[RMDB]
RNA sequence: GGGAACGACUCGAGUAGAGUCGAAAAGCUCUAGGAGACUAGAGCGAUACGUUAGAGAACUCGUGGCAUGACUAACGGAUAGCCAGGUACGAGGUUGCCAGAGGACAUAGCUAUAGCUAUGUCCAAAGUGCUAAGAUACCUUCGGGUAUCUUAGCACAAAAGAAACAACAACAACAAC
Reactivity to 2A3 in 0.01 (KOAc 150mM, MgCl2 10mM, bicine 150mM(pH8.5), 24C), signal-to-noise 2, nucleotides 027 to 126: g000c010u000c010u000a000g000g050a040g030a160c040u000a000g000a000g000c000g000a000u000a030c020g020u030u060a000g040a000g010a090a010c000u000c010g020u060g020g000c060a080u070g070a030c000u000a080a000c000g120g000a080u100a010g110c000c000a050g070g000u090a080c090g090a060g060g080u150u030g010c040c060a040g050a040g030g000a000c000a030u000a010g000c040u110a030u030a300g000c000u030a000u000g000u070c000c000a000a000a000
Reactivity to DMS in 0.01 (KOAc 150mM, MgCl2 10mM, bicine 150mM(pH8.5), 24C), signal-to-noise 2, nucleotides 027 to 126: g000c000u000c040u010a010g020g000a120g040a220c000u000a000g000a000g010c020g000a000u020a000c110g000u000u030a000g040a070g060a120a080c030u040c040g000u000g000g020c040a160u000g020a050c010u000a020a100c060g000g000a140u000a040g000c010c000a050g000g000u000a050c080g000a050g000g000u000u000g050c040c000a180g040a260g040g010a000c000a000u000a000g000c010u060a180u000a210g000c000u000a020u000g000u000c000c010a000a020a080
Source information: An RNA of 177 nucleotides, treated with 2A3 and DMS and read out base by base. Source: RMDB library OK1LIB, as collected in RNAgym. Values cover nucleotides 27 to 126. The reactions ran in a buffer of 150 mM KOAc, 10 mM MgCl2 and 150 mM bicine (pH 8.5), at 24 C.